[RMDB]
RNA sequence: GGGAACGACUCGAGUAGAGUCGAAAAAGGAUGAAAUUCUGCAGGGUACAAUUCUCCUUGAAGAUUUUUACGAUCUCUUCCUCCGGAAGGAGCAACAUAAAAGAAUUUCCCUCCUUCGCUAAGAAGCGCUAUACGCUCGAUUCGUCGAGCGUAUAGCAAAAGAAACAACAACAACAAC
Reactivity to 2A3 in 0.01 (KOAc 150mM, MgCl2 10mM, bicine 150mM(pH8.5), 24C), signal-to-noise 1, nucleotides 027 to 126: a000g100g000a060u120g040a060a000a070u080u040c010u060g020c050a010g050g060g000u100a110c070a100a190u170u050c080u020c030c010u020u040g030a070a010g010a050u030u030u040u070u170a120c080g040a060u000c050u000c000u060u020c000c000u050c020c030g050g020a060a040g020g010a020g020c030a040a070c020a110u300a130a090a030a020g130a060a080u040u030u020c040c000c000u030c020c000u030u050c050g020c050u100a130a020g050a140a010g100c060
Reactivity to DMS in 0.01 (KOAc 150mM, MgCl2 10mM, bicine 150mM(pH8.5), 24C), signal-to-noise 2, nucleotides 027 to 126: a040g010g030a130u000g000a050a070a020u000u000c030u000g030c150a010g010g000g000u000a120c230a120a070u030u000c070u020c000c070u050u030g010a130a060g000a000u000u000u040u010u020a040c100g000a020u000c010u000c030u000u000c080c000u010c050c090g000g100a050a070g000g000a070g030c300a070a080c140a090u010a050a060a090a070g010a040a050u000u000u000c020c070c020u000c090c000u010u000c030g020c110u060a100a110g010a060a000g040c300
Conditions: 150 mM KOAc, 10 mM MgCl2 and 150 mM bicine (pH 8.5), 24 C. An RNA of 177 nucleotides, treated with 2A3 and DMS and read out base by base. The data come from the RNA Mapping Database (RMDB), library OK1LIB.